[RMDB]
Notes: An RNA of 207 nucleotides, treated with 2A3 and DMS and read out base by base. High 2A3 reactivity points to a flexible backbone, as in loops and unpaired stretches.

RNA sequence: GGGAACGACUCGAGUAGAGUCGAAAAGACCAAUAACACAAUGCACCACAGCGUAAAAUCAUCUGAUUGGGUGAGUUGGUCGCACCGCCAUUUGACGAACGAACGCCAAGCCUAAGCCGUCUUUGUGAACACGAGCUAGUCUUCGGACUAGCUCGAACAUGAACGUAUCCUUCGGGAUACGUUCAUGAAAAGAAACAACAACAACAAC
Reactivity to 2A3 in 0.01 (KOAc 150mM, MgCl2 10mM, bicine 150mM(pH8.5), 24C), signal-to-noise 3, nucleotides 027 to 156: g030a010c020c030a010a070u150a140a030c040a000c000a060a090u130g020c010a020c040c010a060c060a010g030c030g020u110a000a060a060a100u020c040a030u000c040u060g070a210u100u180g080g000g020u020g030a040g030u030u060g000g010u010c000g000c010a030c000c010g010c000c010a050u070u040u070g060a040c070g010a210a010c020g020a050a020c010g030c000c040a040a030g010c040c010u050a070a010g020c030c020g080u030c050u040u060u060g090u060g050a070a030c080a030c100g000a000g000c010u000a000g000u000c000u010u030c180g000g010a000c000u000a000g000c010u000c000g000a000a000
Reactivity to DMS in 0.01 (KOAc 150mM, MgCl2 10mM, bicine 150mM(pH8.5), 24C), signal-to-noise 1, nucleotides 027 to 156: g000a080c090c020a030a070u000a030a130c030a160c030a090a110u000g010c050a050c050c010a030c070a080g010c080g000u000a090a050a120a140u000c040a050u000c000u000g000a180u000u000g050g020g080u000g040a100g070u010u020g040g050u000c010g000c070a110c010c020g050c010c070a090u000u000u000g000a090c080g010a040a060c080g020a080a070c070g010c020c020a050a100g000c060c040u000a100a100g010c020c010g020u000c020u000u010u000g010u010g000a090a130c100a170c020g000a050g000c000u000a020g000u010c010u000u010c300g010g050a000c010u000a000g020c020u000c010g010a010a070
The DMS profile rests on 2,092 reads.
The reactions ran in a buffer of 150 mM KOAc, 10 mM MgCl2 and 150 mM bicine (pH 8.5), at 24 C.